[RMDB]
RNA sequence: GGGAACGACUCGAGUAGAGUCGAAAAUUCAUCUGCACUUUUGGUCAUCAUGCAAUCGAAAACAUCGCCUUCGGACCCACAUCCAACAAGCGUGGAGGCAUUGUACCAAUGUCUAGUAGCAAGCUGAGCAUUGACUGUGAUUCGUCACAGUCAAUGCAAAAGAAACAACAACAACAAC
Reactivity to 2A3 in 0.01 (KOAc 150mM, MgCl2 10mM, bicine 150mM(pH8.5), 24C), signal-to-noise 2, nucleotides 027 to 126: u010u000c020a040u030c030u080g050c040a040c080u010u080u080u110g040g010u040c020a040u000c020a020u120g030c040a050a150u070c040g130a050a020a070a010c020a040u080c010g000c020c000u050u050c030g070g010a060c030c000c010a030c000a050u040c030c000a010a060c030a180a080g080c080g040u080g030g060a020g000g010c020a000u020u050g050u080a170c000c080a020a010u050g040u040c020u040a000g000u020a040g050c030a070a020g000c030u050g010a010
Reactivity to DMS in 0.01 (KOAc 150mM, MgCl2 10mM, bicine 150mM(pH8.5), 24C), signal-to-noise 2, nucleotides 027 to 126: u000u010c050a040u020c080u000g030c050a070c030u000u000u000u020g030g000u010c030a040u010c040a030u020g020c050a090a110u020c100g000a080a110a130a090c110a020u010c070g000c020c060u000u000c100g010g010a120c040c020c010a100c110a120u010c050c030a060a050c220a090a110g010c050g040u000g010g010a030g000g000c010a020u040u000g020u010a090c090c060a040a050u000g000u010c030u000a030g010u010a130g010c060a030a060g000c050u000g000a230
The record gives the reactivity of an RNA of 177 nucleotides to 2A3 and DMS. For 2A3 the reverse transcriptase was SuperScript II with manganese. The DMS profile rests on 1,628 reads. Conditions: 150 mM KOAc, 10 mM MgCl2 and 150 mM bicine (pH 8.5), 24 C.